The record gives the reactivity of an RNA of 170 nucleotides to DMS and 2A3. The RNA was probed in 150 mM KOAc, 10 mM MgCl2 and 150 mM bicine (pH 8.5) at 24 C. For 2A3, 43,141 sequencing reads were counted. For 2A3 the reverse transcriptase was SuperScript II with manganese.
RNA sequence: GGGAACGACUCGAGUAGAGUCGAAAAGGAUUACUAGAACUCUGUCAACUCAGUACUGCCGGUUCGGUAGUUGUGAGUAUGCACAAGAGGGUGUUUGUAUUACCACAAAUGGCUCGUGGGCCAUUUUAAGCCUGCUAGUUCGCUAGCAGGAAAAGAAACAACAACAACAAC
Reactivity to DMS in 0.01 (KOAc 150mM, MgCl2 10mM, bicine 150mM(pH8.5), 24C), signal-to-noise 8, nucleotides 027 to 129: g000g000a110u000u030a060c050u000a010g030a140a130c000u040c000u030g020u000c020a060a040c000u000c010a050g020u010a030c030u020g000c010c000g060g000u020u060c070g020g040u030a000g000u000u030g020u000g020a050g000u040a080u020g010c180a040c040a080a060g000a050g000g040g020u050g000u010u030u010g010u030a010u000u000a080c000c000a080c170a000a000a000u000g000g000c000u000c020g030u040g050g020g010c010c000a000u010u030u010u070a080a120g020
Reactivity to 2A3 in 0.01 (KOAc 150mM, MgCl2 10mM, bicine 150mM(pH8.5), 24C), signal-to-noise 9, nucleotides 027 to 129: g040g010a090u110u040a030c030u040a020g080a100a020c000u010c000u000g010u010c000a010a010c000u000c000a010g050u030a010c010u000g000c000c020g300g110u250u300c110g010g010u020a010g000u010u030g300u010g060a010g000u020a260u050g060c130a010c040a200a030g000a010g030g030g000u090g100u030u170u060g030u000a060u030u140a140c020c030a040c060a040a030a010u010g000g000c000u040c090g120u220g080g020g000c000c020a020u010u020u000u030a020a010g050